[RMDB]
RNA sequence: GGGAACGACUCGAGUAGAGUCGAAAACACAACUGCGAAGGGGGGACGGAGAAGGCUAUGUUGGCCGGGCGACGGUUGUGCCGGUUUAAGCGUGUAGGCUGGUUUUCCAGGCAAAUCCGGAAUUGAAACCGGUGAAUACAUUCGUGUAUUCACCGGUAAAAGAAACAACAACAACAAC
Reactivity to DMS in 0.01 (KOAc 150mM, MgCl2 10mM, bicine 150mM(pH8.5), 24C), signal-to-noise 1, nucleotides 027 to 126: c010a070c050a050a070c050u010g000c020g040a170a080g020g020g000g020g000g020a100c090g000g010a090g000a100a040g010g030c040u000a070u000g010u000u020g000g000c010c060g000g000g000c110g010a080c050g010g030u000u000g040u000g000c000c010g000g020u050u000u010a080a070g010c070g000u010g000u000a040g010g000c020u000g010g000u010u000u000u000c000c030a130g000g000c040a060a110a100u000c010c010g000g030a060a060u010u000g010a040a080